RNA sequence: GGGAACGACUCGAGUAGAGUCGAAAAGGCCUGACGUUCGCGUCAGGCCAAACCUGGAGGAGGAUGGAACACUGGGGGGAGCCCAUACCCAGGACAGGGCAGAAACUGUCCCGUUCGCGGGACAGAAUCAUUCCCUCUACUUCGGUAGAGGGAAUGAAAAAGAAACAACAACAACAAC
Reactivity to DMS in 0.01 (KOAc 150mM, MgCl2 10mM, bicine 150mM(pH8.5), 24C), signal-to-noise 1, nucleotides 027 to 126: g010g000c000c000u040g020a030c000g030u010u030c260g020c000g010u000c020a000g020g000c020c000a000a000a050c010c000u010g000g010a090g000g000a030g010g010a030u000g000g030a080a060c100a060c050u000g000g000g010g000g000g000a120g020c040c010c040a070u000a040c040c020c010a110g010g000a080c170a050g000g000g000c100a140g010a070a090a170c000u000g000u000c000c000c000g000u000u000c140g020c030g000g000g000a010c000a000g010a070a070